[RMDB]
RNA sequence: GGGAACGACUCGAGUAGAGUCGAAAAGAUAUGGACGUUCCAGGGAGCUGCGACCUCGGAAACGAGGCAGCGAGGAUCUGGACGUCCUAAGUCAAAAGCCUCAUCCAAGUUCGCUUGGAUGAGGCAACCACUGUCUGACGUUCGCGUCAGACAGUGGAAAAGAAACAACAACAACAAC
Reactivity to DMS in 0.01 (KOAc 150mM, MgCl2 10mM, bicine 150mM(pH8.5), 24C), signal-to-noise 1, nucleotides 027 to 126: g000a040u000a300u000g030g000a000c000g000u010u000c000c010a010g000g020g030a050g040c030u000g000c080g000a290c300c000u000c020g020g020a110a070a090c030g000a000g020g000c050a020g000c000g000a080g000g030a090u000c000u000g000g000a010c000g010u000c000c000u000a010a040g010u000c040a060a100a070a190g000c000c000u000c000a010u000c000c000a010a010g000u000u030c230g020c000u000u000g020g000a000u000g000a020g000g000c020a000a020
Reactivity to 2A3 in 0.01 (KOAc 150mM, MgCl2 10mM, bicine 150mM(pH8.5), 24C), signal-to-noise 1, nucleotides 027 to 126: g020a010u050a030u100g000g000a000c030g110u300u000c030c000a020g010g020g030a050g000c030u040g000c150g280a300c040c000u000c000g000g030a020a080a020c020g000a010g000g000c010a000g020c000g080a300g030g020a080u110c010u010g000g010a000c000g000u010c000c000u000a030a030g030u010c030a120a000a000a140g000c000c010u000c000a010u000c000c010a000a000g000u070u110c240g060c240u000u010g000g010a010u000g010a000g010g000c000a010a000